[RMDB]
The record gives the reactivity of an RNA of 177 nucleotides to DMS and 2A3. As a SHAPE reagent, 2A3 marks flexible, mostly unpaired nucleotides at the ribose 2'-OH. Conditions: 150 mM KOAc, 10 mM MgCl2 and 150 mM bicine (pH 8.5), 24 C. 2A3 adducts were read by reverse transcription with SuperScript II with manganese.

RNA sequence: GGGAACGACUCGAGUAGAGUCGAAAAGAUAUGGAGCAAGAGCGACGAUCUAGCGUAACAUCUCGUCGGAAACGACGAGUGGCUAGGGAGCUCGACCUCCUAAGUCAAAGCGGGGUUCGCCCCGCAACGGAAUGUAUGACUUCGGUCAUACAUUCCGAAAAGAAACAACAACAACAAC
Reactivity to DMS in 0.01 (KOAc 150mM, MgCl2 10mM, bicine 150mM(pH8.5), 24C), signal-to-noise 3, nucleotides 027 to 126: g030a030u000a300u030g000g000a000g020c020a010a300g030a000g010c000g000a040c250g010a060u000c000u000a020g010c000g000u000a030a100c200a010u000c000u000c000g000u010c000g010g000a070a110a170c020g020a000c010g000a000g030u000g000g000c000u000a010g010g000g020a000g010c000u000c020g000a260c300c040u010c000c000u000a070a100g000u000c010a100a130a070g000c000g020g010g000g000u000u030c300g000c010c000c010c010g000c000a000a020
Reactivity to 2A3 in 0.01 (KOAc 150mM, MgCl2 10mM, bicine 150mM(pH8.5), 24C), signal-to-noise 2, nucleotides 027 to 126: g030a010u070a000u150g030g000a000g000c040a050a040g030a000g020c010g300a300c000g000a060u030c000u000a000g010c010g090u110a060a040c030a210u120c020u000c010g000u000c000g000g080a070a060a030c000g000a000c000g000a000g000u000g000g000c000u000a000g010g010g000a000g000c000u000c000g000a000c000c000u010c010c010u010a180a020g020u010c050a060a060a110g000c010g020g000g080g000u110u130c220g150c020c000c020c000g000c000a010a010